[RMDB]
Structure probing data (2A3 and DMS) for a 207-nucleotide construct. It was measured as part of the RMDB library M2RFOK.
RNA sequence: GGGAACGACUCGAGUAGAGUCGAAAAAGCACGGUUUUUGAGGACGCAUUUUGUCCGUGCGGUAAUGCCCUCCAUUACACUUUCUCGCAUGGUGCGGGAGUGUGGAGAGGAAACAAAAGCUAGUCUCGAUAGGCGGUUAACUUCGGUUAACCGCCAACUCUGAACUAAACUUCGGUUUAGUUCAGAGAAAAGAAACAACAACAACAAC
Reactivity to 2A3 in 0.01 (KOAc 150mM, MgCl2 10mM, bicine 150mM(pH8.5), 24C), signal-to-noise 5, nucleotides 027 to 156: a000g010c000a000c000g000g000u000u000u000u010u020g070a080g010g020a010c040g020c110a140u000u000u000u000g000u000c010c010g000u000g000c010g050g040u200a050a030u300g000c000c000c000u000c010c000a020u130u200a030c020a010c040u110u150u040c030u020c010g030c010a090u230g290g020u300g160c000g000g010g000a000g000u010g000u010g000g000a040g010a030g010g000a000a000a000c000a000a000a000a010g040c030u070a030g010u000c000u000c020g070a110u100a120g000g010c010g000g000u010u000a000a000c010u030u030c130g030g000u000u000a000a000c000c000g000c000c000a000a000
Reactivity to DMS in 0.01 (KOAc 150mM, MgCl2 10mM, bicine 150mM(pH8.5), 24C), signal-to-noise 2, nucleotides 027 to 156: a090g030c030a020c010g010g010u020u000u000u000u000g000a080g020g000a020c020g010c100a100u000u010u000u010g020u020c000c030g000u000g010c000g050g010u010a040a040u010g020c010c000c000u010c020c000a080u000u060a100c010a050c120u000u000u000c000u000c000g020c020a240u000g010g030u000g010c000g000g000g030a030g020u000g030u000g010g000a050g010a170g070g000a040a010a030c020a040a040a050a030g030c090u000a110g010u000c010u000c070g010a190u010a100g000g020c000g030g020u000u000a010a010c010u000u010c300g030g000u000u000a000a010c000c010g010c000c000a000a020